[RMDB]
Background:
An RNA of 207 nucleotides, treated with 2A3 and read out base by base.
RNA sequence: GGGAACGACUCGAGUAGAGUCGAAAAGCCAGUCAGAGGGCGCUACCAUGCAAACUAGGGCUGGCUACUCUUGCACAGAAUCACCUUUCUAUAAUAACCAGUGCAAGAAGGGUUAUUAUCCCAUUUAAAAAUCGUGAAUGCUUCGGCAUUCACGAAACGAAGGGAUGCAUUUCGAUGCAUCCCUUCGAAAAGAAACAACAACAACAAC
Reactivity to 2A3 in 0.01 (KOAc 150mM, MgCl2 10mM, bicine 150mM(pH8.5), 24C), signal-to-noise 2, nucleotides 027 to 156: g000c000c000a000g020u040c000a010g000a020g020g000g020c010g030c020u100a300c040c100a140u300g000c010a000a020a030c000u010a020g000g000g020c000u000g000g000c000u000a010c000u000c000u010u010g010c000a010c010a010g100a060a090u150c070a230c060c030u120u300u270c160u200a030u020a070a010u000a040a000c020c000a000g000u000g010c000a000a000g000a020a000g000g000g010u040u000a020u010u020a010u020c020c030c040a130u160u240u280a080a140a000a000a030u050c000g000u010g000a000a000u000g000c000u090u090c250g030g000c010a000u000u000c000a000c000g000a000a000a000